[RMDB]
RNA sequence: GGGAACGACUCGAGUAGAGUCGAAAACAAAUACCGUUCGCGGUAUUUGAAAUACGGAAACCUUCGUGCCCUCAGAAGUUAAGAGGUGCUUGCUCUCGUUAAAAAUCAGCUGAUUCGUCAGCUGAAACAUCUAAUGGAGGUUCGCCUCCAUUAGAUGAAAAGAAACAACAACAACAAC
Reactivity to DMS in 0.01 (KOAc 150mM, MgCl2 10mM, bicine 150mM(pH8.5), 24C), signal-to-noise 5, nucleotides 027 to 126: c010a000a010a010u000a000c000c000g030u000u020c180g030c010g000g000u000a000u000u010u010g000a060a080a100u010a050c100g010g000a080a090a100c100c040u000u000c040g010u010g000c020c020c010u000c030a120g000a100a060g010u000u010a070a090g010a040g010g010u010g030c050u000u010g010c070u010c040u000c040g000u000u000a010a060a090a130a130u000c000a000g000c000u000g000a020u000u010c180g010u000c000a000g010c000u010g000a010a040a110
Reactivity to 2A3 in 0.01 (KOAc 150mM, MgCl2 10mM, bicine 150mM(pH8.5), 24C), signal-to-noise 4, nucleotides 027 to 126: c000a000a020a000u000a000c000c000g030u030u070c250g010c010g100g000u000a000u000u000u010g010a040a030a020u200a030c030g030g030a060a050a110c020c010u040u050c030g040u030g030c010c010c000u000c030a170g020a270a030g140u150u190a110a030g020a010g030g040u090g050c030u050u080g000c000u020c020u030c070g100u080u080a090a090a020a040a130u030c010a000g000c000u010g000a030u030u070c120g060u000c060a000g010c010u000g000a000a010a000
The record gives the reactivity of an RNA of 177 nucleotides to DMS and 2A3. For DMS the reverse transcriptase was MarathonRT. For 2A3 the reverse transcriptase was SuperScript II with manganese. The RNA was probed in 150 mM KOAc, 10 mM MgCl2 and 150 mM bicine (pH 8.5) at 24 C.